[RMDB]
RNA sequence: GGGAACGACUCGAGUAGAGUCGAAAAUCCUAAGUCCAGCCAUGAAAGAGCACGACGAUCUCAGUUGUCAGGUUCGGAAACGAACCUUGGAUUUACUGAGGGAGUGCUCUGAAUUGGCUGGAUAUGGAAAAGUACAACUACUUCGGUAGUUGUACAACUAUUGUAAUGACUUCGGUCAUUACAAUAGAAAAGAAACAACAACAACAAC
Reactivity to 2A3 in 0.01 (KOAc 150mM, MgCl2 10mM, bicine 150mM(pH8.5), 24C), signal-to-noise 5, nucleotides 027 to 156: u020c010c000u020a130a000g010u000c000c000a000g040c010c000a010u000g010a040a040a010g010a000g010c020a010c020g300a090c010g000a070u000c000u000c000a020g000u020u010g020u020c000a000g010g000u010u000c010g040g040a100a070a050c020g000a010a020c000c010u010u040g030g010a010u120u130u300a010c000u000g000a000g000g000g000a020g000u010g000c000u000c000u000g000a000a010u000u010g000g000c010u000g000g000a000u000a010u010g000g010a060a070a010a040g010u000a000c000a000a000c000u010a000c010u030u080c290g090g000u000a000g000u000u000g000u000a000c000a000a000
Reactivity to DMS in 0.01 (KOAc 150mM, MgCl2 10mM, bicine 150mM(pH8.5), 24C), signal-to-noise 3, nucleotides 027 to 156: u010c010c010u000a070a220g010u000c010c010a010g010c000c000a030u000g020a300a290a020g000a020g020c000a020c000g030a130c120g000a050u010c000u000c000a060g010u010u000g010u000c010a020g000g010u000u000c000g010g000a160a080a270c020g010a000a020c000c000u000u010g020g020a050u000u010u000a020c000u000g000a020g010g000g030a070g020u000g000c010u000c000u010g000a020a140u000u000g010g010c010u000g000g010a010u000a020u010g000g000a100a060a110a180g000u000a000c010a000a020c000u000a000c000u000u020c300g040g000u000a000g030u000u000g010u000a000c000a050a090